Background: An RNA of 177 nucleotides, treated with 2A3 and DMS and read out base by base. 2A3 adducts were read by reverse transcription with SuperScript II with manganese.
[RMDB]
RNA sequence: GGGAACGACUCGAGUAGAGUCGAAAAUUAAAAGGGAACGACUCGAGUAGAGUCGAAAAGACGCUCAACUCAUGCAGCGCAAGACGAAUAGCUACAUAUUCGACAUGAGGGCGCCGUUCGCAAAAAACUAUGUGUUAUUGUUCGCAAUAACACAUAGAAAAGAAACAACAACAACAAC
Reactivity to 2A3 in 0.01 (KOAc 150mM, MgCl2 10mM, bicine 150mM(pH8.5), 24C), signal-to-noise 4, nucleotides 027 to 126: u070u120a120a120a130a190g000g000g000a000a000c000g000a000c000u000c000g000a000g010u020a010g010a000g000u000c000g000a000a000a000a000g010a000c010g010c010u050c080a050a100c040u010c020a030u060g030c050a070g050c070g020c120a030a020g080a030c030g000a020a010u020a030g060c100u150a060c070a150u070a030u030u030c010g010a010c020a030u030g010a020g010g010g020c010g000c010c010g040u020u030c120g040c120a060a070a000a000a000a040
Reactivity to DMS in 0.01 (KOAc 150mM, MgCl2 10mM, bicine 150mM(pH8.5), 24C), signal-to-noise 4, nucleotides 027 to 126: u000u020a030a050a150a080g000g010g000a030a060c010g000a010c010u000c000g010a030g020u010a050g000a010g000u000c000g000a020a020a080a130g020a060c000g010c000u010c130a120a200c040u010c020a020u010g010c090a180g030c180g010c150a050a090g010a270c020g010a020a010u000a010g000c140u000a080c150a120u000a020u000u000c010g030a190c000a030u010g000a040g000g000g010c040g010c010c010g010u000u010c050g010c080a000a030a060a070a060a100